[RMDB]
RNA sequence: GGGAACGACUCGAGUAGAGUCGAAAAUCCUUCCUUUUCGAAGGAAGGACAGUCCACAGUCUUCGCAUCUGUGAAUCACACAACAGCCGUGUCUAUGCGAGGUUUUAAUCAAGUUCGCUUGAUUAAAUAACACUUGUCAAUUCGUUGACAAGUGUUAAAAAGAAACAACAACAACAAC
Reactivity to 2A3 in 0.01 (KOAc 150mM, MgCl2 10mM, bicine 150mM(pH8.5), 24C), signal-to-noise 5, nucleotides 027 to 126: u000c010c000u020u010c010c000u050u050u030u080c210g130a010a000g000g000a000a010g000g000a000c010a020g080u000c000c020a040c020a090g070u040c030u060u030c030g000c010a020u010c030u050g060u050g190a160a110u170c030a020c010a010c020a140a200c030a120g170c110c090g080u050g000u000c050u080a010u010g000c000g010a010g000g040u040u040u010u050a000a000u010c010a010a010g020u040u040c130g070c090u010u000g000a010u000u000a020a020a020
Reactivity to DMS in 0.01 (KOAc 150mM, MgCl2 10mM, bicine 150mM(pH8.5), 24C), signal-to-noise 6, nucleotides 027 to 126: u000c000c000u000u010c000c000u010u000u000u010c190g010a020a010g000g000a020a000g010g010a010c060a090g000u000c000c010a080c100a070g010u000c060u000u000c020g010c030a020u000c070u000g010u010g010a120a100u010c170a080c080a040c100a080a060c150a100g010c130c090g000u000g010u000c140u000a020u000g000c010g000a020g010g000u010u000u000u000a010a010u000c000a000a000g000u000u010c190g030c000u000u000g000a020u000u000a000a010a070
This 177-nucleotide RNA was probed chemically with 2A3 and DMS.
The 2A3 profile rests on 9,501 reads.
DMS adducts were read by reverse transcription with MarathonRT.
It was measured as part of the RMDB library M2PK50.